Background:
Structure probing data (DMS) for a 177-nucleotide construct. Conditions: 150 mM KOAc, 10 mM MgCl2 and 150 mM bicine (pH 8.5), 24 C. The data come from the RNA Mapping Database (RMDB), library RFM100.
RNA sequence: GGGAACGACUCGAGUAGAGUCGAAAAAUCUGAUCUGAACACUGGUCUUGGUGGUCGUAAAAGGAGGAAAAGUAAUACUGAAGCUGGCCACGCAGUGUUGUAGUUUGUUAUAUGGCACGUGGGCUAGUUUGACAGCCUCCUUCGGGAGGCUGUCAAAAAAAGAAACAACAACAACAAC
Reactivity to DMS in 0.01 (KOAc 150mM, MgCl2 10mM, bicine 150mM(pH8.5), 24C), signal-to-noise 1, nucleotides 027 to 126: a050u020c030u000g000a160u040c030u020g010a220a030c050a050c090u030g060g000u000c130u060u060g000g070u000g000g020u010c060g000u050a000a110a050a060g010g060a060g000g000a020a090a170a150g000u000a030a110u010a200c110u000g040a080a090g010c090u070g000g000c000c060a070c070g000c000a010g000u000g000u000u000g000u010a020g020u000u080u030g050u010u090a100u000a030u000g020g000c000a070c060g000u000g000g000g050c010u000a060g040